[RMDB]
RNA sequence: GGGAACGACUCGAGUAGAGUCGAAAAGAGUGGACCUGACUCUAGUACGAGAGGACCGAGUUGGACGUACCUCUAGUGUAUCAGUUGUGCCGCUAGGUGCAUUGCUGAGUAGCUACGUGCGGUCGAGCAAGUAUUGUUAGUUCGCUAACAAUACUUGAAAAGAAACAACAACAACAAC
Reactivity to DMS in 0.01 (KOAc 150mM, MgCl2 10mM, bicine 150mM(pH8.5), 24C), signal-to-noise 9, nucleotides 027 to 126: g010a100g020u010g010g010a130c110c050u000g010a040c010u000c010u000a050g010u010a080c040g000a050g010a300g000g000a220c050c030g000a110g010u010u000g000g000a070c020g000u000a020c010c010u000c020u000a010g010u000g000u010a300u000c010a010g010u000u000g010u000g010c000c000g000c270u010a080g010g030u000g010c010a010u010u000g010c010u000g000a010g000u010a300g000c010u000a010c190g000u000g000c010g010g000u000c030g000a100g010
Reactivity to 2A3 in 0.01 (KOAc 150mM, MgCl2 10mM, bicine 150mM(pH8.5), 24C), signal-to-noise 5, nucleotides 027 to 126: g120a020g060u180g020g080a080c020c050u060g020a030c010u000c000u020a040g080u120a060c040g010a010g010a020g050g020a020c010c020g010a040g090u070u090g070g020a020c010g000u010a010c010c000u000c000u010a010g010u030g090u260a040u020c010a000g010u030u020g000u020g000c000c020g060c210u130a120g000g080u070g020c000a010u020u080g000c010u010g010a020g030u090a010g000c010u010a010c120g000u010g000c020g000g040u030c010g000a030g030

Record summary: Structure probing data (DMS and 2A3) for a 177-nucleotide construct. Conditions: 150 mM KOAc, 10 mM MgCl2 and 150 mM bicine (pH 8.5), 24 C. It was measured as part of the RMDB library RFMREP. High DMS reactivity at an A or C suggests that its Watson-Crick edge is free.